[RMDB]
RNA sequence: GGGAACGACUCGAGUAGAGUCGAAAACAUAUGACGGAGAGUGGAACACUCAGCGGAAAGGCAUCCAAUGUCUGAAGUCUUUAAUGGGUAUAACAGUCAGUUGACCCAGAUCCCAACAGACAAUAAACCCAGAAACCUUAUUCGUAAGGUUUCUGGGAAAAGAAACAACAACAACAAC
Reactivity to DMS in 0.01 (KOAc 150mM, MgCl2 10mM, bicine 150mM(pH8.5), 24C), signal-to-noise 2, nucleotides 027 to 126: c100a080u010a080u000g010a120c060g030g000a170g010a010g010u010g020g000a190a130c050a080c010u000c030a050g020c040g000g010a000a120a050g000g000c010a120u000c060c080a130a070u010g000u010c000u000g000a160a100g000u000c030u000u000u040a120a220u000g010g000g020u010a060u010a020a010c010a190g030u020c240a090g030u000u000g010a040c000c000c000a000g010a090u020c000c000c020a090a080c020a040g000a010c020a060a060u000a040a060a080
Reactivity to 2A3 in 0.01 (KOAc 150mM, MgCl2 10mM, bicine 150mM(pH8.5), 24C), signal-to-noise 2, nucleotides 027 to 126: c020a020u160a070u240g080a020c030g070g040a030g000a010g110u070g020g140a120a000c040a010c060u020c020a020g040c010g070g020a140a020a010g040g000c010a000u000c030c060a110a040u030g010u000c000u010g020a050a010g000u020c010u000u050u030a060a060u020g000g000g040u030a120u040a300a020c010a010g260u270c100a060g000u160u050g040a010c000c030c000a010g000a030u010c020c000c020a000a010c010a020g030a000c000a000a030u110a060a070a020
Overview
This 177-nucleotide RNA was probed chemically with DMS and 2A3. Conditions: 150 mM KOAc, 10 mM MgCl2 and 150 mM bicine (pH 8.5), 24 C. Values are in units of 0.01, from 0 to 300, in steps of 10. It was measured as part of the RMDB library M2PK90. DMS adducts were read by reverse transcription with MarathonRT. As a SHAPE reagent, 2A3 marks flexible, mostly unpaired nucleotides at the ribose 2'-OH.